Background:
The data come from the RNA Mapping Database (RMDB), library M2RFPK. An RNA of 207 nucleotides, treated with 2A3 and DMS and read out base by base. The DMS profile rests on 2,497 reads. The RNA was probed in 150 mM KOAc, 10 mM MgCl2 and 150 mM bicine (pH 8.5) at 24 C.

RNA sequence: GGGAACGACUCGAGUAGAGUCGAAAAAGCCAUACCAUUACGAUGGUAUGGCAAGUCCGUGACGGCGAUGGAUCCCGCCUGGCCGAUGCCGAACUGCCGAUCUGGCUGAUGGGUCCUGCCCCGUCAAAAAACGUAAAGCACUUCGGUGCUUUACGAACUUGAGAAUUACCUUCGGGUAAUUCUCAAGAAAAGAAACAACAACAACAAC
Reactivity to 2A3 in 0.01 (KOAc 150mM, MgCl2 10mM, bicine 150mM(pH8.5), 24C), signal-to-noise 3, nucleotides 027 to 156: a000g000c000c000a000u000a000c000c000a000u060u050a050c240g090a030u010g000g010u000a000u000g000g000c000a000a010g030u020c010c010g020u010g010a000c000g000g030c090g040a020u080g000g000a010u100c000c020c010g020c030c040u050g010g000c010c020g030a050u130g130c040c040g170a210a130c090u160g040c020c000g020a070u060c070u100g020g000c010u030g050a160u150g000g000g000u010c000c000u030g000c000c010c000c010g000u020c020a020a030a020a050a000a030c000g000u000a000a000a000g000c000a000c010u010u120c220g070g000u010g000c000u000u000u000a000c000g000a020a000
Reactivity to DMS in 0.01 (KOAc 150mM, MgCl2 10mM, bicine 150mM(pH8.5), 24C), signal-to-noise 1, nucleotides 027 to 156: a090g000c010c010a000u000a040c000c010a030u010u000a100c300g020a150u010g000g010u000a010u020g000g040c010a020a000g000u010c000c060g030u000g010a040c010g020g000c010g030a140u010g000g030a070u010c000c010c100g020c040c020u010g000g020c030c000g010a050u000g050c050c060g030a130a140c050u000g030c010c010g060a040u000c000u020g010g010c000u000g020a190u000g010g000g000u000c020c020u030g000c100c110c030c010g030u010c020a000a030a030a040a080a060c030g040u010a010a000a010g010c000a010c010u010u010c290g040g050u010g010c000u000u000u000a030c000g010a030a070